Conditions: 150 mM KOAc, 10 mM MgCl2 and 150 mM bicine (pH 8.5), 24 C. Structure probing data (DMS and 2A3) for a 207-nucleotide construct. DMS adducts were read by reverse transcription with MarathonRT. Source: RMDB library M2RFPK, as collected in RNAgym.
RNA sequence: GGGAACGACUCGAGUAGAGUCGAAAAUUCCAUUUGAGUAUCCUGAAAACGGGCGUUUCAGCAUGGAACGUACAUAUUAAAUAGUAGGAGUGCAUAGUGGCCCGUAUAGCAGGCAUUAACAUUCCUGAAAACGUGAAAAGGUUCGCCUUUUCACGAACUUAUUAACCACGUUCGCGUGGUUAAUAAGAAAAGAAACAACAACAACAAC
Reactivity to DMS in 0.01 (KOAc 150mM, MgCl2 10mM, bicine 150mM(pH8.5), 24C), signal-to-noise 3, nucleotides 027 to 156: u000u000c010c000a080u000u010u000g000a120g020u010a120u000c000c000u000g020a090a060a150a110c070g010g000g000c000g000u000u000u000c020a190g020c140a080u010g010g020a050a040c010g010u010a110c060a100u000a120u000u010a050a080a240u000a120g000u000a040g030g010a120g050u010g020c040a170u000a110g000u000g010g030c010c000c000g010u010a090u000a140g010c090a020g010g020c050a040u000u010a130a070c030a070u000u000c010c010u000g010a080a080a090a160c000g040u000g010a010a010a030a010g020g010u010u020c300g060c020c010u000u000u000u000c000a000c000g020a010a050
Reactivity to 2A3 in 0.01 (KOAc 150mM, MgCl2 10mM, bicine 150mM(pH8.5), 24C), signal-to-noise 3, nucleotides 027 to 156: u030u050c020c000a030u110u030u040g030a020g060u050a080u140c010c000u020g040a040a040a000a050c020g010g000g000c010g010u000u050u050c060a040g040c010a060u060g040g060a120a010c040g090u100a030c020a050u270a060u120u300a140a190a170u140a020g150u050a010g000g060a040g020u010g010c120a100u050a150g100u050g110g050c020c020c010g030u010a030u050a070g030c010a010g020g010c000a000u030u020a010a060c000a020u020u050c000c000u010g070a080a050a050a030c000g000u010g000a000a000a000a010g020g000u020u050c150g090c000c010u000u010u000u020c000a010c000g000a000a000